[RMDB]
RNA sequence: GGGAACGACUCGAGUAGAGUCGAAAAACCCUGGCUCAGGUGGCUUCAGGCCCUUUCUUCUGGGCCCCAGUUGCCUGGGGGGUGGGAGGGAUCCCCUCACCCAGGUCCCACUGGCGCUGACUCUGGAAGCUCACCCCAGGGGAGGAGAAGCUAGGGAUCGAGGUAUCAUAUUCGUAUGAUACCUCGAAAAAGAAACAACAACAACAAC
Reactivity to 2A3 in 0.01 (KOAc 150mM, MgCl2 10mM, bicine 150mM(pH8.5), 24C), signal-to-noise 1, nucleotides 027 to 156: a000c010c000c030u020g020g010c050u040c170a080g080g030u050g090g000c040u090u070c090a050g040g030c010c030c010u110u130u060c040u130u070c050u030g030g000g000c000c040c000c000a040g000u030u020g000c000c000u020g000g000g020g020g000g080u300g020g000g000a060g060g040g020a100u100c040c050c070c030u060c030a300c000c000c000a000g030g000u060c040c020c000a000c020u000g000g000c030g020c060u040g070a140c000u020c070u110g050g050a010a050g090c030u090c140a070c050c000c000c040a030g000g010g010g000a010g020g060a070g000a060a000g030c020u010a000g000g000g020a000